[RMDB]
RNA sequence: GGGAACGACUCGAGUAGAGUCGAAAAGAUAUGGAUAGAGAGCAACAGCUACUACUUCGGAAACGAAGUAGGUAGACAUGCUCGAUUGUCCUAAGUCAAAAGUCAAUGACCUUCGGGUCAUUGACAACGUCUACUCGUCGUUCGCGACGAGUAGACGAAAAGAAACAACAACAACAAC
Reactivity to DMS in 0.01 (KOAc 150mM, MgCl2 10mM, bicine 150mM(pH8.5), 24C), signal-to-noise 1, nucleotides 027 to 126: g000a000u000a300u010g000g000a000u000a040g010a300g000a030g000c010a010a160c300a120g020c000u000a030c010u000a020c000u000u000c000g050g010a050a080a060c010g010a020a010g000u000a040g020g020u000a000g010a180c180a110u010g000c000u000c000g000a220u010u020g000u010c000c020u000a000a160g000u010c020a130a060a070a060g000u000c000a000a000u000g000a050c000c000u000u000c270g020g000g000u000c000a000u010u000g000a000c000a000a020